Conditions: 150 mM KOAc, 10 mM MgCl2 and 150 mM bicine (pH 8.5), 24 C. This 177-nucleotide RNA was probed chemically with 2A3 and DMS. The DMS profile rests on 1,597 reads.
RNA sequence: GGGAACGACUCGAGUAGAGUCGAAAAGAAAGAAAUCGAGAGACUAGCAAUAUUAGAUCGAAUAACUCGUUCUUGAUCUAACUGAGGGAUGAGUUCCGUAAAAGCGGAUUCUAGUCUAAUCGAGAAAGGGUAUGUUUCAGUUCGCUGAAACAUACCCAAAAGAAACAACAACAACAAC
Reactivity to 2A3 in 0.01 (KOAc 150mM, MgCl2 10mM, bicine 150mM(pH8.5), 24C), signal-to-noise 2, nucleotides 027 to 126: g100a000a130a010g040a000a040a030u010c010g000a010g000a000g010a030c000u000a000g010c060a000a030u020a070u100u010a070g100a170u200c070g050a000a030u020a010a040c000u000c010g020u010u000c010u020u080g170a100u080c050u060a060a080c080u120g080a080g000g070g020a050u020g010a040g010u020u000c000c000g030u010a060a200a020a010g030c000g000g000a000u010u000c000u000a000g000u030c000u000a100a130u000c020g020a000g060a160a010a000
Reactivity to DMS in 0.01 (KOAc 150mM, MgCl2 10mM, bicine 150mM(pH8.5), 24C), signal-to-noise 1, nucleotides 027 to 126: g000a080a140a160g000a000a150a110u000c000g000a070g000a020g000a010c000u000a000g000c170a000a000u030a000u000u000a030g000a040u030c030g100a040a000u040a050a000c000u000c000g020u000u010c000u010u000g000a000u030c160u010a060a130c130u060g020a120g010g000g040a000u000g000a010g030u000u020c000c010g000u000a060a100a130a180g000c040g010g000a060u000u000c000u000a020g020u000c000u000a240a160u000c000g010a000g000a080a080a160
2A3 is a SHAPE reagent: it acylates the 2'-hydroxyl of flexible nucleotides of all four kinds.